[RMDB]
RNA sequence: GGGAACGACUCGAGUAGAGUCGAAAAGCUGUGCAACAUCGUGUUCGGCCGGAACGGGACGGUCUACCUUGUGGCCUCCGGCCUGGCGAACCAUGCCGGUGCCGGCGAGGCGGCGAACAUUCCGCGGGACCUCGGCAAUUACUACCUGAUCGGCAUCGUGUAAUCAAAGGUUCGCCUUUGAUUACACAAAAGAAACAACAACAACAAC
Reactivity to 2A3 in 0.01 (KOAc 150mM, MgCl2 10mM, bicine 150mM(pH8.5), 24C), signal-to-noise 4, nucleotides 027 to 156: g060c040u050g020u110g130c030a080a050c020a130u080c060g020u030g050u140u050c060g140g000c030c000g000g020a140a070c030g000g010g110a040c090g020g040u000c040u090a100c050c030u110u160g080u100g110g010c000c010u010c000c000g000g030c000c000u000g000g000c000g040a030a060c060c010a060u170g000c010c000g010g010u100g020c000c000g020g010c030g010a040g000g010c000g030g020c010g020a060a020c060a190u170u080c040c020g020c010g040g090g060a120c020c000u030c000g040g000c010a010a000u160u060a070c060u070a040c000c020u080g020a090u070c040g040g000c020a030u070c070
Reactivity to DMS in 0.01 (KOAc 150mM, MgCl2 10mM, bicine 150mM(pH8.5), 24C), signal-to-noise 1, nucleotides 027 to 156: g030c030u010g010u000g000c020a070a040c030a020u000c060g020u020g000u000u010c030g040g010c040c020g000g010a090a040c030g000g000g020a100c060g020g010u000c030u020a040c080c110u010u000g060u010g040g010c020c030u000c010c010g010g040c040c010u000g020g040c010g000a040a070c060c080a130u000g020c000c040g010g000u000g020c010c000g010g030c030g010a090g000g060c050g040g030c040g000a060a100c150a150u000u000c050c010g040c030g020g020g000a090c070c030u000c010g000g060c030a060a140u000u000a050c040u000a060c010c030u000g000a110u000c010g010g010c020a070u000c060
The data come from the RNA Mapping Database (RMDB), library OK3TST. Structure probing data (2A3 and DMS) for a 207-nucleotide construct. The DMS profile rests on 4,177 reads. Values cover nucleotides 27 to 156. For 2A3, 3,226 sequencing reads were counted. The reactions ran in a buffer of 150 mM KOAc, 10 mM MgCl2 and 150 mM bicine (pH 8.5), at 24 C.